[RMDB]
RNA sequence: GGGAACGACUCGAGUAGAGUCGAAAAUUUUUAAAGAUUGCUCUAGAGAAACUUCUGGCCUCUCACCUGCUUAUGCACCAACAUAUGUUAGUGUUGAUGACAAGUAUAAGACGAGUGAUGAGCUUUGUACCGCUUCGGUUCGCCGAAGCGAAAAGAAACAACAACAACAAC
Reactivity to 2A3 in 0.01 (KOAc 150mM, MgCl2 10mM, bicine 150mM(pH8.5), 24C), signal-to-noise 3, nucleotides 027 to 129: u110u090u020u000u050a090a000a000g060a020u030u040g020c030u000c020u090a060g010a000g060a150a150a060c010u070u060c030u120g070g010c000c000u000c000u010c000a000c010c000u030g000c000u000u000a050u000g000c000a000c000c040a000a000c000a030u030a100u190g240u050u280a170g010u020g030u070u000g030a120u060g000a000c090a160a000g030u020a000u000a010a020g070a070c100g040a030g000u040g020a060u100g020a000g000c000u020u060u050g030u030a030c000
Reactivity to DMS in 0.01 (KOAc 150mM, MgCl2 10mM, bicine 150mM(pH8.5), 24C), signal-to-noise 2, nucleotides 027 to 129: u030u040u000u090u000a010a040a090g020a140u000u020g000c060u030c030u070a080g050a120g040a060a050a070c040u050u000c010u070g000g000c060c060u000c060u010c000a000c070c020u050g050c000u040u000a020u050g010c000a070c040c000a000a000c020a000u050a170u050g050u050u000a150g070u020g020u070u000g000a090u030g030a220c240a100a100g010u050a030u000a020a000g040a130c080g010a100g080u000g000a030u080g030a000g000c030u000u000u000g050u030a140c090
Annotation:
Conditions: 150 mM KOAc, 10 mM MgCl2 and 150 mM bicine (pH 8.5), 24 C. Chemical mapping of a 170-nucleotide RNA with 2A3 and DMS. The DMS profile rests on 7,182 reads. For DMS the reverse transcriptase was MarathonRT. For 2A3 the reverse transcriptase was SuperScript II with manganese. Values cover nucleotides 27 to 129.